The record gives the reactivity of an RNA of 207 nucleotides to 2A3. It was measured as part of the RMDB library OK3TST. For 2A3 the reverse transcriptase was SuperScript II with manganese. The RNA was probed in 150 mM KOAc, 10 mM MgCl2 and 150 mM bicine (pH 8.5) at 24 C.
RNA sequence: GGGAACGACUCGAGUAGAGUCGAAAAAGUCUAUAAAAUCAGCACUAUUGCAACAGUAACAUUGGUAUCUACUUUCCUAUACAAGGAGUCUAUGGAGAUGAAGCGUGAUUUCAUAUUCGACUGUCUAGAGGUUAAUGGCAUCACAGCUAAGGCAGCAUCGUCUACCUCUGUUCGCAGAGGUAGACGAAAAAGAAACAACAACAACAAC
Reactivity to 2A3 in 0.01 (KOAc 150mM, MgCl2 10mM, bicine 150mM(pH8.5), 24C), signal-to-noise 2, nucleotides 027 to 156: a000g130u100c100u080a210u160a060a200a040a040u070c020a020g090c060a020c070u260a220u250u100g000c030a070a050c010a140g040u030a010a020c000a080u000u110g100g000u030a060u050c010u020a030c000u050u060u070c000c040u020a020u050a260c100a060a010g020g000a000g040u030c000u080a060u140g010g000a070g040a020u090g020a080a000g050c060g040u040g010a020u020u100u050c020a050u090a100u080u150c000g020a050c070u030g060u030c040u050a000g020a020g220g040u010u100a030a010u060g000g050c010a010u070c070a040c000a000g030c050u030a010a000g000g020c000a000g020c040a080